[RMDB]
RNA sequence: GGGAACGACUCGAGUAGAGUCGAAAAGACGAAAAGUAGUCCACCGCGCUCUGACUGAUGCCUUCAAGCGAAAGAGGUCGGGACAUUGGAUUGCUCUCGAUUUUGGAAUUCAUUAAGAAGAGGCCACAAAAGCUCACAGACAGGGCAACAGGAUUCAUGUACCGACGUAAUUCGUUACGUCGGUACAAAAAGAAACAACAACAACAAC
Reactivity to 2A3 in 0.01 (KOAc 150mM, MgCl2 10mM, bicine 150mM(pH8.5), 24C), signal-to-noise 1, nucleotides 027 to 156: g030a020c080g060a010a060a000a150g170u160a070g010u000c000c000a030c010c000g100c000g000c000u010c000u010g030a160c050u030g000a020u010g080c020c020u140u080c050a160a060g070c030g220a060a060a080g090a010g000g000u130c000g000g060g000a000c010a050u100u100g140g070a270u090u110g050c000u050c000u000c020g010a050u000u000u060u000g030g080a090a060u040u090c010a100u120u300a100a020g020a000a000g000a000g030g040c030c030a040c060a030a280a000a000g030c000u000c130a060c010a030g060a000c010a000g000g000g000c050a020a000c110a030g020g070a010u110u200c060a000
An RNA of 207 nucleotides, treated with 2A3 and read out base by base. The reactions ran in a buffer of 150 mM KOAc, 10 mM MgCl2 and 150 mM bicine (pH 8.5), at 24 C.